[RMDB]
An RNA of 177 nucleotides, treated with 2A3 and DMS and read out base by base. For DMS, 2,894 sequencing reads were counted. Conditions: 150 mM KOAc, 10 mM MgCl2 and 150 mM bicine (pH 8.5), 24 C. High DMS reactivity at an A or C suggests that its Watson-Crick edge is free. It was measured as part of the RMDB library RFM100.
RNA sequence: GGGAACGACUCGAGUAGAGUCGAAAAGAAAGAAAGAAAGUCCCCCCCGGCCCAGGUUCUGUGAUACACUCCGACUCGGGCUCUGGAGCAGUCAGUGCAUGACAGAACUUGGGCCCGGAAGGACCAAGACGAGGAAUCUAUUCGUAGAUUCCUCGUCAAAAGAAACAACAACAACAAC
Reactivity to 2A3 in 0.01 (KOAc 150mM, MgCl2 10mM, bicine 150mM(pH8.5), 24C), signal-to-noise 4, nucleotides 027 to 126: g080a020a060a010g110a040a150a010g090a050a100a000g030u030c010c000c000c000c010c000c000g010g000c000c000c000a000g000g000u000u000c000u000g030u010g070a010u020a010c010a000c020u070c100c110g050a050c030u060c130g180g080g020c090u030c090u150g070g020a040g040c010a000g020u040c000a000g000u000g030c010a000u060g140a020c000a000g000a000a000c010u010u000g000g000g000c000c000c000g000g000a000a020g020g010a010c030c050a050a070
Reactivity to DMS in 0.01 (KOAc 150mM, MgCl2 10mM, bicine 150mM(pH8.5), 24C), signal-to-noise 2, nucleotides 027 to 126: g010a130a080a150g000a080a090a060g000a090a220a200g010u000c010c020c030c070c040c010c110g000g000c010c000c030a030g030g010u000u000c010u000g010u000g000a020u000a060c010a030c030u000c210c150g010a020c000u000c060g000g000g000c000u000c020u030g010g020a040g010c130a120g030u010c010a040g020u000g010c080a000u000g000a000c000a030g010a040a010c000u020u000g000g010g020c000c000c000g000g000a300a130g000g030a090c030c090a080a110